[RMDB]
RNA sequence: GGGAACGACUCGAGUAGAGUCGAAAAAGGAAAUUACCAGCAGGGGGUGAUCCACCCGGAGAUGAGCGGACAAGCCACAUCCAGAGGACCCCUUCAGCGAACAGAAGACCCUGGUACCGGGGGGGAAACAGCGCAGCGUUCGCGCUGCGCAAAAGAAACAACAACAACAAC
Reactivity to DMS in 0.01 (KOAc 150mM, MgCl2 10mM, bicine 150mM(pH8.5), 24C), signal-to-noise 2, nucleotides 027 to 129: a000g030g030a060a010a010u040u030a070c010c130a020g020c060a020g040g000g040g100g080u060g000a080u040c020c100a140c100c000c060g100g000a030g020a060u000g050a280g050c080g000g010a100c180a050a120g050c070c030a040c050a080u000c000c000a250g010a120g020g030a070c050c110c040c030u020u080c000a060g000c100g000a000a150c090a000g000a040a060g020a100c070c190c000u020g000g070u030a090c000c000g030g040g000g000g000g100g000a050a040a020c040a080
Reactivity to 2A3 in 0.01 (KOAc 150mM, MgCl2 10mM, bicine 150mM(pH8.5), 24C), signal-to-noise 2, nucleotides 027 to 129: a000g060g000a010a030a020u020u010a070c000c000a000g070c050a080g000g000g000g000g000u000g020a040u040c000c010a050c040c000c000g020g000a050g000a050u040g000a010g000c000g050g080a060c060a060a050g030c000c000a040c000a010u080c020c000a030g050a180g070g000a110c000c000c000c000u000u010c010a010g000c000g000a000a040c000a040g100a060a030g130a070c040c000c000u010g010g040u040a010c010c000g000g020g000g000g050g030g000a000a040a030c040a000
Conditions: 150 mM KOAc, 10 mM MgCl2 and 150 mM bicine (pH 8.5), 24 C.
This 170-nucleotide RNA was probed chemically with DMS and 2A3.
Values cover nucleotides 27 to 129.
For 2A3, 2,034 sequencing reads were counted.